Source: RMDB library 15KLIB, as collected in RNAgym. Structure probing data (2A3 and DMS) for a 170-nucleotide construct. For 2A3 the reverse transcriptase was SuperScript II with manganese. Reactivities are given for positions 27 through 129. The reactions ran in a buffer of 150 mM KOAc, 10 mM MgCl2 and 150 mM bicine (pH 8.5), at 24 C. High DMS reactivity at an A or C suggests that its Watson-Crick edge is free.
RNA sequence: GGGAACGACUCGAGUAGAGUCGAAAAUUGAAGGUAAAACAGCCUGUGGGUGAAACACACCCACAGGGCCCAGUGGGCGCUAGCACUCGGGUAUCACGGUACCUUUGUGCGCCUGUUUUACCGAAGGGGGGAACACAGUUCGCUGUGUUCAAAAGAAACAACAACAACAAC
Reactivity to 2A3 in 0.01 (KOAc 150mM, MgCl2 10mM, bicine 150mM(pH8.5), 24C), signal-to-noise 7, nucleotides 027 to 129: u120u110g080a120a020g000g000u010a000a000a000a000c000a000g000c000c000u000g000u000g000g010g000u020g040a060a080a010c130a020c000a000c050c010c010a000c000a000g000g000g000c000c000c000a070g090u300g010g000g000c030g010c080u120a070g000c000a000c010u020c010g000g000g010u000a000u020c030a020c200g120g000u000a000c000c000u020u010u010g010u000g000c000g010c000c000u000g000u000u000u000u000a000c000c000g000a000a000g000g000g000g000g000
Reactivity to DMS in 0.01 (KOAc 150mM, MgCl2 10mM, bicine 150mM(pH8.5), 24C), signal-to-noise 9, nucleotides 027 to 129: u060u020g010a190a100g010g010u000a000a000a010a010c000a010g020c000c000u000g020u020g000g010g040u000g030a100a160a100c260a170c010a010c000c000c020a000c030a010g030g000g020c000c000c010a090g030u090g000g010g020c010g030c020u050a070g020c000a020c010u020c060g010g000g010u000a000u010c020a120c280g030g010u030a030c010c010u010u020u000g000u000g020c000g000c010c000u000g000u020u010u010u000a000c000c000g000a040a050g030g020g000g000g020